[RMDB]
RNA sequence: GGGAACGACUCGAGUAGAGUCGAAAAAGGCCUCGAGACCGGGCUGCCCGUGAUCUUCGGAGUCCUCACCACCGACACGAUCGAGCAGGCCGUCGAGCGUGCGGGCACCAAGUCGGGAAACAAGGGAAUUGAAUUACGAGUUCGCUCGUAAUUCAAUAAAAGAAACAACAACAACAAC
Reactivity to DMS in 0.01 (KOAc 150mM, MgCl2 10mM, bicine 150mM(pH8.5), 24C), signal-to-noise 3, nucleotides 027 to 126: a120g010g010c020c010u000c050g020a110g000a070c100c030g000g010g020c090u000g010c020c010c000g000u000g000a110u000c050u000u010c080g040g000a130g000u020c040c030u000c030a120c050c060a180c060c030g010a110c210a040c100g000a030u000c030g010a070g030c070a110g000g020c010c020g010u000c030g000a050g020c080g000u010g020c040g020g000g000c070a070c060c040a150a100g010u000c030g000g000g000a080a080a080c100a050a110g000g010g000a190
Reactivity to 2A3 in 0.01 (KOAc 150mM, MgCl2 10mM, bicine 150mM(pH8.5), 24C), signal-to-noise 2, nucleotides 027 to 126: a010g030g020c030c040u030c020g100a080g040a010c050c060g050g000g010c060u060g040c010c010c000g040u040g020a150u040c110u170u030c050g040g010a020g030u040c020c020u050c050a090c010c040a070c000c030g040a040c020a020c110g070a100u030c030g000a020g070c050a080g040g090c030c010g070u030c020g000a020g000c020g030u050g020c000g010g000g020c020a010c000c010a040a040g070u070c070g040g040g110a030a060a010c100a100a000g110g000g030a080